RNA sequence: GGGAACGACUCGAGUAGAGUCGAAAACUCUGGUGAGACCCUAUCUAGUAUAGCAAUCCACCAAGCAGGUGAGUUCACACAAUUCAGGUUCUCAUAGAAAAUGCGCCCUGACUUGACAGGUAUGGUCAUCGUAUGCUAGCUUCGGCUAGCAUACGAUAAAAGAAACAACAACAACAAC
Reactivity to DMS in 0.01 (KOAc 150mM, MgCl2 10mM, bicine 150mM(pH8.5), 24C), signal-to-noise 2, nucleotides 027 to 126: c070u020c000u020g030g000u020g000a060g000a100c160c170c050u000a070u000c040u040a050g010u010a070u000a050g000c140a060a020u000c030c000a000c020c000a060a040g010c220a060g020g000u030g030a050g010u000u040c050a130c150a170c130a010a110u020u000c070a020g020g000u010u020c010u000c020a040u000a050g010a040a070a040a020u000g020c130g000c300c020c000u020g000a050c040u000u000g000a120c020a030g000g000u000a050u040g000g000u040c090
Reactivity to 2A3 in 0.01 (KOAc 150mM, MgCl2 10mM, bicine 150mM(pH8.5), 24C), signal-to-noise 2, nucleotides 027 to 126: c020u000c010u030g000g060u090g030a190g020a060c050c030c000u000a000u000c020u000a040g140u230a070u020a070g000c050a050a050u000c000c000a000c010c000a020a040g200c050a010g040g000u020g010a140g010u020u010c010a000c010a000c000a190a060u060u040c000a020g040g000u200u080c040u050c060a020u000a090g200a040a180a050a000u070g000c000g000c010c000c000u010g040a040c030u040u110g010a040c000a020g000g040u050a040u070g000g010u010c040

The record gives the reactivity of an RNA of 177 nucleotides to DMS and 2A3.
The 2A3 profile rests on 956 reads.
For DMS the reverse transcriptase was MarathonRT.
2A3 adducts were read by reverse transcription with SuperScript II with manganese.